RNA sequence: GGGAACGACUCGAGUAGAGUCGAAAAUUAACACGAGGUCACCACACAGCUUUCACAAAUCUACAAGUCAUUCUAUUUAGGCUGAGUCAAGUUCUCCCUUGGGCCAGCCAGAGCACAAAUAAUGGAGCAAUGUGACUCUUCAAUGACAGAUCUCUGACUGACUCCAUUAGUUCGCUAAUGGAGUCAGAAAAGAAACAACAACAACAAC
Reactivity to 2A3 in 0.01 (KOAc 150mM, MgCl2 10mM, bicine 150mM(pH8.5), 24C), signal-to-noise 3, nucleotides 027 to 156: u110u040a060a010c040a000c120g020a040g000g070u030c000a010c120c000a010c030a020c030a060g060c030u040u130u130c070a050c080a050a110a020u100c070u160a110c060a230a000g010u000c010a040u090u060c040u200a170u110u260u160a030g000g020c010u020g000a010g020u020c010a030a020g010u120u060c040u090c050c000c020u030u000g100g030g300c000c000a000g000c000c000a000g000a000g000c050a000c000a010a090a040u240a060a100u200g110g000a030g050c070a060a110u080g040u050g130a240c020u000c000u160u090c030a030a100u030g000a020c010a030g030a080u040c010u040c060u110g040a040